[RMDB]
RNA sequence: GGGAACGACUCGAGUAGAGUCGAAAAGAUAUGGAAGAUUGUGGUGGCAACAGCUGCACGGGUCGGAAACGACCUGCAGACAUGCCAUAGAAUCUUCCUAAGUCAAAACGGCUGGUUCGCCAGCCGAGAGGUUAAAUACCUUCGGGUAUUUAACCUCAAAAGAAACAACAACAACAAC
Reactivity to 2A3 in 0.01 (KOAc 150mM, MgCl2 10mM, bicine 150mM(pH8.5), 24C), signal-to-noise 2, nucleotides 027 to 126: g000a000u070a030u130g000g000a030a040g000a030u050u090g130u290g300g140u030g030g070c060a300a060c110a300g030c010u010g000c040a130c300g130g000g020u020c000g020g000a030a010a010c000g000a000c000c020u020g060c000a000g020a060c070a090u300g000c010c000a000u000a010g030a000a000u000c000u000u000c000c000u010a080a010g040u020c030a020a040a070a220c010g040g000c000u010g040g090u080u060c300g050c060c000a010g000c040c000g030a020
Reactivity to DMS in 0.01 (KOAc 150mM, MgCl2 10mM, bicine 150mM(pH8.5), 24C), signal-to-noise 2, nucleotides 027 to 126: g020a050u020a300u000g010g010a010a030g000a010u000u000g010u010g030g020u000g030g050c000a040a110c300a190g010c000u010g020c000a070c230g010g010g000u000c000g000g000a090a070a210c010g010a000c000c000u000g000c000a020g000a040c140a190u000g000c000c000a010u000a090g010a040a030u000c000u010u000c000c000u000a000a110g000u000c010a130a030a120a190c020g000g020c000u010g000g000u010u020c240g010c010c020a010g010c000c000g010a020